RNA sequence: GGGAACGACUCGAGUAGAGUCGAAAAGAUGAUAGUCGCACUGUCCUUAGACAGUGCACGAAAGAAUCUUAGUUCUGAGUGUCUAUCUAUAGACACUGAAGUGUAAGCACUUCUCGUGGCUAUCAUACAUAGGUUUGUGAUUCGUUGCAGAUCUAUGAAAAGAAACAACAACAACAAC
Reactivity to 2A3 in 0.01 (KOAc 150mM, MgCl2 10mM, bicine 150mM(pH8.5), 24C), signal-to-noise 9, nucleotides 027 to 126: g110a000u010g000a000u000a000g010u010c040g000c010a000c010u000g010u010c030c050u080u050a060g000a000c000a000g000u010g020c000a000c000g020a010a040a010g060a020a030u270c030u080u070a040g020u090u020c010u020g030a000g010u000g000u000c000u000a070u010c050u050a220u080a100g000a000c000a000c000u010g060a070a010g010u030g010u110a040a040g050c020a020c050u000u000c010u000c030g030u040g000g000c000u000a000u000c000a000u010a030
Reactivity to DMS in 0.01 (KOAc 150mM, MgCl2 10mM, bicine 150mM(pH8.5), 24C), signal-to-noise 9, nucleotides 027 to 126: g000a040u000g000a010u000a000g010u000c030g010c000a020c020u000g000u000c000c300u030u040a100g000a010c000a000g010u000g010c020a020c070g000a040a050a010g000a020a010u010c130u030u020a070g010u000u000c000u000g000a100g010u000g000u000c000u000a050u010c210u030a100u010a010g000a010c000a000c020u000g000a020a010g010u000g010u020a130a130g020c080a020c020u000u000c010u000c050g020u080g000g000c000u000a000u000c000a010u000a160
An RNA of 177 nucleotides, treated with 2A3 and DMS and read out base by base. For 2A3, 120,258 sequencing reads were counted. The reactions ran in a buffer of 150 mM KOAc, 10 mM MgCl2 and 150 mM bicine (pH 8.5), at 24 C. For 2A3 the reverse transcriptase was SuperScript II with manganese.